Background
The data come from the RNA Mapping Database (RMDB), library OK2TRN. The record gives the reactivity of an RNA of 177 nucleotides to 2A3 and DMS. Conditions: 150 mM KOAc, 10 mM MgCl2 and 150 mM bicine (pH 8.5), 24 C. 2A3 adducts were read by reverse transcription with SuperScript II with manganese.

[RMDB]
RNA sequence: GGGAACGACUCGAGUAGAGUCGAAAACAGUCAACGUGAAGGCGGGCCAGACCAUCGCCGCAUUCUACCAGAGCACCGUCAUGAUCUUUGGCACGAUGGCUCGCUACAUGCGAAGAGUUAGGGAAAAAAUUACGCCUGAUUUCGAUCAGGCGUAAUUAAAAGAAACAACAACAACAAC
Reactivity to 2A3 in 0.01 (KOAc 150mM, MgCl2 10mM, bicine 150mM(pH8.5), 24C), signal-to-noise 2, nucleotides 027 to 126: c020a010g110u090c030a000a060c030g020u040g120a200a080g060g000c020g000g000g040c030c020a020g060a050c020c020a060u070c010g030c060c030g030c020a030u080u050c000u060a060c000c050a030g030a010g030c060a060c100c060g090u140c020a080u110g080a110u030c020u060u040u090g030g000c060a020c090g060a070u030g020g000c000u020c010g000c010u050a020c010a090u210g000c000g050a040a010g000a020g060u110u110a080g070g000g000a080a120a000a000
Reactivity to DMS in 0.01 (KOAc 150mM, MgCl2 10mM, bicine 150mM(pH8.5), 24C), signal-to-noise 3, nucleotides 027 to 126: c060a190g000u010c060a080a170c060g000u000g020a190a140g000g010c000g000g020g000c020c040a070g010a140c110c090a080u000c090g020c060c040g020c070a040u010u010c050u000a080c040c040a090g010a040g010c110a030c020c040g020u010c080a100u000g000a040u000c020u000u000u000g010g020c060a040c120g000a140u000g000g010c020u000c020g020c040u000a060c050a080u000g000c010g010a060a150g010a080g010u000u000a060g000g010g000a000a030a080a050